[RMDB]
RNA sequence: GGGAACGACUCGAGUAGAGUCGAAAAGGCUAGUUUGCUAUCGUAGUCUUUUGGCUACGCUCGAAAGAGGUACAGGAUCUGCUCCAACUGUACCGCGAUAGCACGGAGCAGAAUUUUUAUAGCCGAAGGGUUGCAGCUACUUCGGUAGCUGUGACCCAAAAGAAACAACAACAACAAC
Reactivity to 2A3 in 0.01 (KOAc 150mM, MgCl2 10mM, bicine 150mM(pH8.5), 24C), signal-to-noise 8, nucleotides 027 to 126: g000g000c000u010a010g080u040u130u150g020c030u040a010u030c010g020u010a010g020u010c000u020u110u060u150g010g000c010u030a030c040g030c020u030c030g100a080a070a030g060a010g010g000u020a010c010a000g020g020a080u030c010u030g010c010u000c010c020a090a050c020u020g010u020a010c000c020g050c020g040a050u040a010g000c030a030c110g010g000a010g000c000a000g000a000a000u020u020u010u020u070a090u020a010g010c010c010g020a080a030
Reactivity to DMS in 0.01 (KOAc 150mM, MgCl2 10mM, bicine 150mM(pH8.5), 24C), signal-to-noise 8, nucleotides 027 to 126: g000g010c000u000a010g010u030u010u010g010c020u000a020u010c030g020u000a020g020u010c010u010u000u020u040g000g000c000u010a020c060g010c110u010c080g000a080a080a090g010a080g010g010u000a010c020a020g000g010a130u010c030u010g010c020u010c010c010a120a190c040u000g010u000a010c010c030g010c140g000a050u000a020g020c030a100c180g020g000a050g000c020a030g010a060a040u020u030u030u030u030a080u010a020g000c000c010g010a120a130